[RMDB]
RNA sequence: GGGAACGACUCGAGUAGAGUCGAAAAACAGCAAGCAAAAGCACAAUUGUUGGAGCUUAACAGCACAUCUUUUGACGCAAAUAAUUUGAGAAGUAUCGAAGAGCUUGGAGUGCUUAAUGCUGUCAGAACCGCAGUAUUUUUUCGAAAAUACUGCGGUAAAAGAAACAACAACAACAAC
Reactivity to DMS in 0.01 (KOAc 150mM, MgCl2 10mM, bicine 150mM(pH8.5), 24C), signal-to-noise 3, nucleotides 027 to 126: a040c050a030g020c010a080a090g030c100a050a110a050a090g020c020a060c060a140a160u010u000g030u010u000g010g000a170g010c040u000u000a080a150c200a070g000c050a020c100a060u000c010u000u000u010u000g010a060c090g000c030a050a070a100u010a030a090u000u030u010g000a080g000a080a100g020u000a110u000c040g010a030a150g000a020g000c060u000u000g020g000a170g030u000g000c000u000u000a050a150u010g020c000u000g000u000c090a060g010a090
Reactivity to 2A3 in 0.01 (KOAc 150mM, MgCl2 10mM, bicine 150mM(pH8.5), 24C), signal-to-noise 3, nucleotides 027 to 126: a000c010a000g050c010a000a020g000c010a040a090a050a030g010c020a010c020a050a220u060u120g100u110u090g050g040a050g000c010u070u050a060a000c020a030g000c030a000c000a070u040c010u060u160u070u140g080a050c020g000c040a030a090a140u240a120a150u170u120u120g070a120g010a180a020g050u060a040u070c020g030a050a020g020a020g080c020u070u120g060g070a110g020u040g000c000u030u010a070a030u080g000c000u010g000u020c000a010g060a120
Notes: Chemical mapping of a 177-nucleotide RNA with DMS and 2A3. Conditions: 150 mM KOAc, 10 mM MgCl2 and 150 mM bicine (pH 8.5), 24 C. It was measured as part of the RMDB library OK2TRN. Reactivities are rounded to 0.1 and cut off at 0 and 3.